[RMDB]
RNA sequence: GGGAACGACUCGAGUAGAGUCGAAAAGAUAUGGACCGUCAAUUCUCUGGGCAGGAGGUGAACUACGCUGCGUUCGGAAACGAACGAUAGCGCACCUCCUGCCCAGAGAAUUGAGCGGUCCUAAGUCGAAAUAUGAUUUGUUCGCAAAUCAUAUUUCAAAAGAAACAACAACAACAAC
Reactivity to DMS in 0.01 (KOAc 150mM, MgCl2 10mM, bicine 150mM(pH8.5), 24C), signal-to-noise 1, nucleotides 027 to 126: g000a090u000a300u000g010g010a020c000c000g010u000c000a020a020u000u000c000u020c020u020g010g000g000c000a010g000g010a030g020g030u000g000a090a070c250u020a300c040g020c000u010g010c000g000u000u000c000g000g000a130a100a280c000g000a000a000c010g010a090u010a010g010c010g020c000a020c000c030u010c000c000u000g000c000c010c000a000g000a000g000a000a010u000u000g000a090g020c000g010g000u000c000c000u000a000a080g010u010c110